[RMDB]
RNA sequence: GGGAACGACUCGAGUAGAGUCGAAAAGAGCAUGAGGCGAGACCCGUAGCGCAGGGCAAAACUUCCACGGGCAACUGUGGGACGGCUCUGUAAAAAAGGAGAGGGAGUUCAUGAACAGCAACUCCCACAGAGUACGAGUGUUCGCACUCGUACUCUGAAAAGAAACAACAACAACAAC
Reactivity to 2A3 in 0.01 (KOAc 150mM, MgCl2 10mM, bicine 150mM(pH8.5), 24C), signal-to-noise 1, nucleotides 027 to 126: g040a010g000c040a040u130g080a020g000g110c040g000a050g040a150c000c000c030g040u040a030g050c060g000c030a000g040g000g000c050a170a120a070a070c010u020u000c000c000a000c010g000g000g000c040a070a030c020u000g000u000g000g000g030a020c060g010g000c000u010c000u010g010u030a000a070a000a000a080a070g200g040a100g010a060g000g020g000a020g000u000u020c100a070u190g050a130a060c030a060g000c010a000a000c000u000c030c000c020a000
Reactivity to DMS in 0.01 (KOAc 150mM, MgCl2 10mM, bicine 150mM(pH8.5), 24C), signal-to-noise 2, nucleotides 027 to 126: g030a200g000c030a090u010g010a060g000g000c040g000a210g000a170c020c000c000g020u010a070g000c180g010c000a000g000g030g030c000a130a090a090a090c300u000u000c000c000a000c000g000g000g000c250a050a060c000u000g000u020g000g020g000a000c030g000g010c000u020c030u000g000u020a000a000a080a030a070a040g060g000a040g000a080g000g010g000a010g000u000u000c040a090u060g020a090a130c230a170g070c180a030a020c040u000c010c000c000a050

Background: Structure probing data (2A3 and DMS) for a 177-nucleotide construct. Reactivities are given for positions 27 through 126. The data come from the RNA Mapping Database (RMDB), library RFM100. In probing experiments dimethyl sulfate is read out at A N1 and C N3, which are open when not base-paired. The RNA was probed in 150 mM KOAc, 10 mM MgCl2 and 150 mM bicine (pH 8.5) at 24 C. High 2A3 reactivity points to a flexible backbone, as in loops and unpaired stretches. DMS adducts were read by reverse transcription with MarathonRT.